[RMDB]
RNA sequence: GGGAACGACUCGAGUAGAGUCGAAAAGUUCAUCCCCUGAUCAAGGAUGCCCGAAACGGUGAGGCGGAAAGCAAAUUAAAUAACGUCAACCCAUCGGGACGGUUGGCCAGUUAAGAAUUGAGGAUUCAAAAGAUCGAACCGUUCGCGGUUCGAUCAAUCAGGUGUCCAUGUUCGCAUGGACACCUGAAAAAGAAACAACAACAACAAC
Reactivity to 2A3 in 0.01 (KOAc 150mM, MgCl2 10mM, bicine 150mM(pH8.5), 24C), signal-to-noise 1, nucleotides 027 to 156: g050u090u040c040a030u010c000c000c000c000u000g010a020u010c000a000a050g060g040a030u050g020c010c000c010g150a060a040a000c030g000g000u040g030a150g010g000c060g020g070a150a050a000g050c150a120a000a120u120u130a160a070a050u170a090a000c020g050u000c000a000a000c060c000c000a030u000c000g000g000g020a020c000g030g120u050u000g000g010c000c000a000g040u060u130a100a030g020a050a120u090u090g070a120g200g010a100u140u020c090a030a030a070a140g000a000u000c000g010a000a000c000c000g020u020u000c100g030c010g100g000u000u000c000g000a000u000c000a000a000